[RMDB]
RNA sequence: GGGAACGACUCGAGUAGAGUCGAAAAACACAAAUAUGAAAUAUUGGUCCUGGAUGGGCGCGUUUUCUCUGUCAAUGCUCUUCUGGGCUGAACUCCUCUGGAUCAUUACUCACUAAUCCCUGACCCCGAUUCACCCGUAGUUCGCUACGGGUGAAUCAAAAGAAACAACAACAACAAC
Reactivity to DMS in 0.01 (KOAc 150mM, MgCl2 10mM, bicine 150mM(pH8.5), 24C), signal-to-noise 1, nucleotides 027 to 126: a060c110a130c300a000a070a250u100a150u000g000a140a000a300u000a090u000u000g000g000u000c000c000u030g030g000a110u010g000g000g000c040g000c020g080u000u050u020u000c000u000c090u050g090u000c120a130a080u000g000c040u000c010u000u000c060u020g050g000g000c000u000g020a020a170c020u000c020c030u000c100u000g010g000a160u000c030a050u050u000a110c130u050c020a070c100u020a090a230u000c000c000c000u000g000a130c000c010c050c020
Reactivity to 2A3 in 0.01 (KOAc 150mM, MgCl2 10mM, bicine 150mM(pH8.5), 24C), signal-to-noise 4, nucleotides 027 to 126: a000c080a000c060a040a100a010u280a090u140g130a040a100a020u200a100u050u100g020g000u090c010c000u040g050g030a080u070g050g020g000c040g000c030g040u010u010u130u050c060u020c010u080g120u080c030a070a080u150g000c000u010c000u090u060c060u010g000g030g000c000u000g000a030a040c030u030c010c030u040c010u020g000g010a020u040c000a040u030u130a070c030u020c030a030c020u080a070a060u040c020c000c010u000g060a020c010c000c000c020

An RNA of 177 nucleotides, treated with DMS and 2A3 and read out base by base. The reactions ran in a buffer of 150 mM KOAc, 10 mM MgCl2 and 150 mM bicine (pH 8.5), at 24 C. For DMS the reverse transcriptase was MarathonRT. The 2A3 profile rests on 1,979 reads.